Structure probing data (2A3 and DMS) for a 177-nucleotide construct. For 2A3 the reverse transcriptase was SuperScript II with manganese. The reactions ran in a buffer of 150 mM KOAc, 10 mM MgCl2 and 150 mM bicine (pH 8.5), at 24 C. The DMS profile rests on 7,984 reads. The data come from the RNA Mapping Database (RMDB), library OK2TST.

RNA sequence: GGGAACGACUCGAGUAGAGUCGAAAAGGCGGACCGUGGAGUACACCAGAACCUACAAUCUGGUUCCCAUGCUGGAAGGCCGCUCCUCCGUGGGAAGGUUGGGCCUCUUCAUCCACGUCACCGCAGGAAGCGAUAUCAUUUUCGAAUGAUAUCGCUUAAAAGAAACAACAACAACAAC
Reactivity to 2A3 in 0.01 (KOAc 150mM, MgCl2 10mM, bicine 150mM(pH8.5), 24C), signal-to-noise 4, nucleotides 027 to 126: g160g000c010g020g010a020c020c010g020u010g000g000a050g040u090a040c010a010c090c010a020g000a050a190c030c100u160a080c170a030a140u020c010u010g000g000u020u030c000c020c000a050u130g030c050u090g030g040a060a030g020g010c010c040g140c040u020c010c010u000c010c020g200u210g080g090g020a090a070g030g000u120u070g040g010g000c000c000u020c010u040u040c010a140u000c020c000a000c010g000u020c090a100c110c000g000c010a010g070g150
Reactivity to DMS in 0.01 (KOAc 150mM, MgCl2 10mM, bicine 150mM(pH8.5), 24C), signal-to-noise 7, nucleotides 027 to 126: g010g020c010g010g000a300c300c010g010u000g000g010a070g020u000a100c170a060c010c010a020g010a030a080c130c120u010a100c300a100a090u000c030u000g000g000u000u000c030c020c020a100u010g020c160u000g020g000a070a040g010g000c010c020g000c060u000c010c010u000c040c030g020u010g020g000g000a060a030g010g010u000u010g020g000g010c010c010u000c070u000u000c040a150u000c010c000a010c000g010u000c160a080c020c010g010c020a160g010g010